Structure probing data (DMS and 2A3) for a 207-nucleotide construct. The 2A3 profile rests on 1,703 reads. For DMS, 2,662 sequencing reads were counted. DMS adducts were read by reverse transcription with MarathonRT. The reactions ran in a buffer of 150 mM KOAc, 10 mM MgCl2 and 150 mM bicine (pH 8.5), at 24 C.
[RMDB]
RNA sequence: GGGAACGACUCGAGUAGAGUCGAAAAAAAUCACCUCGGUAUGAUUAGGGUGAGACCUAGGAACCGUAGGGGUAUUCUCAAAGGAAGCGUUUGCAGUGACGCCCAUGUAAGUGGGAUAUAACAACAGAUCAGUUUCGCAGUUUCGACUGCGAAACAAGCUAUACUCAUACUUCGGUAUGAGUAUAGCAAAAGAAACAACAACAACAAC
Reactivity to DMS in 0.01 (KOAc 150mM, MgCl2 10mM, bicine 150mM(pH8.5), 24C), signal-to-noise 2, nucleotides 027 to 156: a030a050a060u000c030a090c000c000u000c000g000g010u000a050u010g010a300u010u000a020g020g000g010u000g010a300g000a090c010c020u000a110g010g000a180a070c020c010g000u010a060g000g000g000g020u010a080u010u000c030u000c040a110a110a100g000g000a070a100g030c050g020u000u010u000g000c030a090g030u000g000a080c060g060c010c010c000a060u000g040u000a100a150g040u000g000g000g000a110u010a100u010a140a070c060a030a050c060a070g030a110u010c060a090g000u000u000u000c000g030c000a020g020u010u000u000c300g000a080c010u020g010c000g000a000a000a000c010a020a100
Reactivity to 2A3 in 0.01 (KOAc 150mM, MgCl2 10mM, bicine 150mM(pH8.5), 24C), signal-to-noise 3, nucleotides 027 to 156: a000a000a010u090c040a040c010c000u020c020g000g040u240a130u150g060a130u070u050a020g020g000g000u060g120a070g030a050c000c000u010a020g020g020a030a030c010c040g020u150a050g000g040g010g000u010a020u040u020c020u000c000a070a050a000g130g040a050a010g020c040g040u060u120u150g030c090a040g010u020g070a010c060g010c000c010c020a030u100g090u210a120a080g020u010g010g020g030a020u040a010u020a100a050c080a010a020c010a040g050a110u150c070a030g010u000u000u000c000g000c000a000g000u000u070u130c120g140a030c000u030g000c000g000a000a000a000c000a000a000